[RMDB]
RNA sequence: GGGAACGACUCGAGUAGAGUCGAAAAAGGGACUGUGGAACUAUGCCUGCGAGGCAUUCCGUGUGCUCUCCCGGGAGGGCAUGUAUGACGCCUUCUGGAGUCUGAUCAGCCUGGACGCUCGCGUCCAGCUCGCGUAAUACUUCGGUAUUACGCGAGCAAAAGAAACAACAACAACAAC
Reactivity to DMS in 0.01 (KOAc 150mM, MgCl2 10mM, bicine 150mM(pH8.5), 24C), signal-to-noise 3, nucleotides 027 to 126: a090g010g000g000a040c040u000g010u000g000g020a050a080c220u020a090u010g000c010c020u000g030c180g020a130g010g010c020a060u000u000c050c040g020u010g010u000g010c020u000c010u010c000c030c090g020g010g010a040g010g000g000c030a020u010g010u000a100u010g010a090c210g000c030c030u000u000c060u020g000g000a080g000u000c020u000g010a140u000c080a080g000c090c030u000g000g000a020c020g020c090u010c300g010c020g000u000c010c010a050
Reactivity to 2A3 in 0.01 (KOAc 150mM, MgCl2 10mM, bicine 150mM(pH8.5), 24C), signal-to-noise 4, nucleotides 027 to 126: a000g050g010g010a020c060u070g020u130g180g020a050a040c070u070a090u070g010c000c000u100g110c210g100a200g000g030c000a010u050u000c010c000g040u050g070u100g080c000u000c020u010c020c010c010g030g060g010a030g020g000g000c020a030u050g030u080a110u120g050a040c050g040c010c000u050u070c030u110g080g000a030g020u010c030u050g030a110u080c020a010g050c000c030u040g000g000a010c010g020c050u080c130g060c030g030u000c010c010a000

Structure probing data (DMS and 2A3) for a 177-nucleotide construct. The DMS profile rests on 3,760 reads. Conditions: 150 mM KOAc, 10 mM MgCl2 and 150 mM bicine (pH 8.5), 24 C. The data come from the RNA Mapping Database (RMDB), library OK2TST. DMS adducts were read by reverse transcription with MarathonRT.